This 177-nucleotide RNA was probed chemically with 2A3 and DMS.
[RMDB]
RNA sequence: GGGAACGACUCGAGUAGAGUCGAAAAUCAAUUAUUCAGCUCGCAAUGGAUGCACCGUCGAACAAGCUCAGAGCGUCUGAGCGGGUGUCACCGGUCACAAACUGCAACGGCGGUGCGGGUGGUCGGACCACUACUCAUCCUUCGGGAUGAGUAGUGGAAAAGAAACAACAACAACAAC
Reactivity to 2A3 in 0.01 (KOAc 150mM, MgCl2 10mM, bicine 150mM(pH8.5), 24C), signal-to-noise 2, nucleotides 027 to 126: u080c000a010a040u080u040a050u150u140c110a050g040c030u020c040g010c020a050a160u150g070g010a030u080g000c020a010c020c000g010u000c000g030a100a070c050a190a060g000c020u070c060a040g040a100g180c100g210u060c010u030g000a020g000c050g020g010g010u090g070u060c040a040c090c000g000g000u040c020a020c030a090a270a120c080u070g000c040a110a030c000g010g010c000g000g020u030g000c000g000g030g000u000g010g000u040c000g000g000a020
Reactivity to DMS in 0.01 (KOAc 150mM, MgCl2 10mM, bicine 150mM(pH8.5), 24C), signal-to-noise 2, nucleotides 027 to 126: u000c080a080a140u010u000a080u030u000c130a080g000c020u010c060g040c080a060a090u020g000g000a130u010g030c070a010c000c000g010u020c010g010a100a060c100a090a070g000c030u000c020a030g000a260g030c280g020u000c010u000g010a080g010c000g000g000g040u000g020u000c110a090c080c040g000g010u000c020a030c070a080a120a260c060u000g000c150a030a130c010g010g000c010g010g010u000g000c020g000g000g030u000g010g020u050c010g020g000a300
2A3 adducts were read by reverse transcription with SuperScript II with manganese.
Reactivities are given for positions 27 through 126.
For DMS the reverse transcriptase was MarathonRT.
The reactions ran in a buffer of 150 mM KOAc, 10 mM MgCl2 and 150 mM bicine (pH 8.5), at 24 C.